[RMDB]
RNA sequence: GGGAACGACUCGAGUAGAGUCGAAAAGGCCCUGGUCAUACAUGCAGACUGUGGCCAGGUUGGAGUUGGCCUUUAGGGUCCCCAGCUCCUUGCCCCAUGUCCUUUGCUACUGCUGGAUUUUUAAAGGUGGUAACUUUGAUGGCUUAUGAAAAUUUCAGCAUCCUUACUUGUUCGCAAGUAAGGAUGCAAAAGAAACAACAACAACAAC
Reactivity to 2A3 in 0.01 (KOAc 150mM, MgCl2 10mM, bicine 150mM(pH8.5), 24C), signal-to-noise 2, nucleotides 027 to 156: g040g010c000c000c000u000g010g000u000c000a010u010a120c050a040u150g150c060a020g080a120c120u030g000u030g020g000c000c000a000g010g000u060u080g000g000a000g000u000u000g000g020c020c010u100u090u140a180g030g000g020u100c090c000c010c000a000g000c000u000c000c000u010u050g040c010c000c000c030a060u110g030u030c030c020u050u070u040g010c010u040a060c010u050g000c020u010g020g070a110u080u080u100u000u090a070a230a090g010g010u010g010g020u030a060a040c020u010u090u080g020a070u090g030g110c000u000u120a080u160g090a060a110a160a200u180u180u170c000a040